An RNA of 177 nucleotides, treated with DMS and 2A3 and read out base by base. The data come from the RNA Mapping Database (RMDB), library OK2TRN. For 2A3, 2,518 sequencing reads were counted.
[RMDB]
RNA sequence: GGGAACGACUCGAGUAGAGUCGAAAACUCAGCUAGGAUCCGUACUACAUGUGUCUAGCUGAUCAGUGAUCGAUCACCAUGUCUAGGAGACUAGUCUAGGAUGUCGUACACAUGACUAGACAUGUGGCGCUUAUCGGAGUUUCGACUCCGAUAAGCGAAAAGAAACAACAACAACAAC
Reactivity to DMS in 0.01 (KOAc 150mM, MgCl2 10mM, bicine 150mM(pH8.5), 24C), signal-to-noise 3, nucleotides 027 to 126: c070u000c020a130g000c030u010a040g000g000a080u000c060c050g000u010a130c100u010a090c030a030u000g020u000g020u020c030u000a030g000c140u010g010a070u010c130a060g010u000g000a190u000c080g000a030u010c040a130c060c010a090u010g000u000c060u010a010g000g000a190g010a170c010u000a010g000u010c040u000a190g010g000a110u000g010u010c020g010u000a170c050a020c010a030u000g000a120c040u000a010g000a040c000a020u000g000u000g010g020
Reactivity to 2A3 in 0.01 (KOAc 150mM, MgCl2 10mM, bicine 150mM(pH8.5), 24C), signal-to-noise 3, nucleotides 027 to 126: c010u010c020a030g030c020u040a040g060g090a110u060c080c030g070u100a120c040u050a030c020a020u070g070u010g020u000c000u040a020g000c050u020g040a080u060c020a010g050u050g050a280u090c030g030a020u090c050a030c040c010a030u130g000u020c010u010a000g020g020a040g060a090c000u010a020g070u000c040u040a060g060g060a220u080g040u090c070g060u170a030c010a010c010a100u070g040a050c020u020a000g010a030c030a000u020g020u020g040g000